[RMDB]
RNA sequence: GGGAACGACUCGAGUAGAGUCGAAAAGAUAUGGAUCGAUGGAGAGCUAUGAAGUACGUCGGAAACGACGUAUGGAGCUCCCAUUCGAUCCUAAGUCAAAAGUGUGUUUCGUUCGCGAAACACACAACCACAGUGAUUACUUCGGUAAUCACUGUGGAAAAGAAACAACAACAACAAC
Reactivity to DMS in 0.01 (KOAc 150mM, MgCl2 10mM, bicine 150mM(pH8.5), 24C), signal-to-noise 2, nucleotides 027 to 126: g000a050u000a270u010g000g000a010u010c000g010a020u010g010g010a190g010a020g040c020u010a300u010g000a170a250g000u010a010c000g050u000c000g000g000a060a090a190c000g010a040c000g000u000a000u010g000g000a020g000c000u010c010c000c010a030u010u000c010g010a010u000c000c000u000a000a050g000u010c030a060a050a100a140g010u030g010u010g010u000u010u000c010g020u000u010c300g020c010g010a010a010a000c000a000c000a000c010a040a110
Reactivity to 2A3 in 0.01 (KOAc 150mM, MgCl2 10mM, bicine 150mM(pH8.5), 24C), signal-to-noise 3, nucleotides 027 to 126: g010a010u030a010u130g000g010a000u010c010g020a010u020g050g040a300g010a010g300c030u060a300u300g000a010a000g000u000a000c000g000u000c000g020g010a000a020a020c010g000a000c000g000u000a010u010g000g000a000g000c000u020c000c000c000a000u020u050c020g000a000u000c000c000u000a000a000g030u000c020a030a010a140a170g000u000g010u010g000u000u020u000c040g010u040u080c300g010c010g090a000a010a000c000a000c000a000c000a010a010